[RMDB]
RNA sequence: GGGAACGACUCGAGUAGAGUCGAAAAGAAGAUAAGAGACGAGACACCGUGGGCAGAUGACAAGAAAGUCCGUCGGUGUCGGUAAGGUCGUCAGUCACAGGCGACCGUUUUCUGUGACUAUAAAGAAAUAGCUACCUGACUUCGGUCAGGUAGCUAUAAAAGAAACAACAACAACAAC
Reactivity to DMS in 0.01 (KOAc 150mM, MgCl2 10mM, bicine 150mM(pH8.5), 24C), signal-to-noise 1, nucleotides 027 to 126: g000a160a130g050a110u040a020a120g000a110g030a020c040g020a170g000a010c000a000c000c000g020u020g000g040g000c050a020g000a170u010g000a100c300a160a080g000a020a160a010g000u040c000c000g000u000c000g050g000u000g050u000c000g020g050u010a050a000g070g020u000c000g000u090c030a050g000u000c150a080c070a180g000g070c060g000a000c040c040g000u000u000u000u000c010u020g000u000g000a030c060u000a020u030a090a100a030g020a030a020